This 177-nucleotide RNA was probed chemically with 2A3 and DMS.
For 2A3 the reverse transcriptase was SuperScript II with manganese.
It was measured as part of the RMDB library TTRDES.
[RMDB]
RNA sequence: GGGAACGACUCGAGUAGAGUCGAAAAAAAGAUAUGGACGUACUACCCACCCAGGAGUACGAGCGUUGAAACUUGCUCGGAAACGAGCAAGUGGAGCUUAAAACUGGAGGUACGUCCUAAGUCAAAAGGUAUGUAAAGGGUUCGCCCUUUACAUACCAAAAGAAACAACAACAACAAC
Reactivity to 2A3 in 0.01 (KOAc 150mM, MgCl2 10mM, bicine 150mM(pH8.5), 24C), signal-to-noise 1, nucleotides 027 to 126: a000a070a000g130a080u160a110u140g000g010a000c000g000u000a010c000u070a110c000c060c020a000c090c030c010a020g000g070a020g140u080a100c170g000a010g000c060g270u300u120g020a000a000a000c000u000u030g000c000u000c000g000g000a050a120a100c020g000a000g000c040a000a000g010u000g020g050a010g050c020u000u050a000a040a000a170c010u030g080g010a000g000g010u010a030c020g010u000c010c000u020a030a020g120u090c080a100a040a090a060
Reactivity to DMS in 0.01 (KOAc 150mM, MgCl2 10mM, bicine 150mM(pH8.5), 24C), signal-to-noise 2, nucleotides 027 to 126: a010a000a070g010a180u000a160u000g020g000a000c010g000u000a000c010u000a100c030c010c040a300c110c000c010a020g000g050a100g020u000a080c300g000a000g000c010g000u000u000g000a180a160a040c020u000u000g000c010u000c020g000g000a090a040a160c000g010a010g020c010a000a010g000u000g000g030a080g060c000u000u000a020a130a240a080c010u020g010g000a120g000g000u000a010c000g010u000c000c000u000a000a100g000u040c100a040a040a120a060